[RMDB]
RNA sequence: GGGAACGACUCGAGUAGAGUCGAAAAGUUGUUCACAGAUGAAGCAGCUGUCCUUCAUCGCACGACGGCAAACUCGUGCUGUGAACAAGUCACGUGAGUCGAUCAGUUUGCCGUCUGAUCGGUCAGAGGACAGCUGAGCUCUGACACUCACGUGUCGGCGUAGUAGGGAUUUCGAUCCCUACUACGCAAAAGAAACAACAACAACAAC
Reactivity to 2A3 in 0.01 (KOAc 150mM, MgCl2 10mM, bicine 150mM(pH8.5), 24C), signal-to-noise 1, nucleotides 027 to 156: g030u010u000g000u000u000c060a050c050a090g070a130u100g060a220a010g000c010a000g000c000u010g020u000c000c000u090u130c060a120u100c000g000c020a000c190g010a000c000g000g010c000a010a010a010c010u040c000g140u120g100c080u080g000u020g030a050a130c040a050a020g090u040c000a000c030g080u100g070a020g020u080c050g040a220u110c050a000g010u010u010u000g010c000c000g000u000c030u060g010a080u060c060g020g110u080c030a020g010a000g000g000a020c000a000g020c000u000g000a000g000c000u000c010u070g010a010c000a000c000u100c010a100c090g000u000g020u000c010g070

An RNA of 207 nucleotides, treated with 2A3 and read out base by base.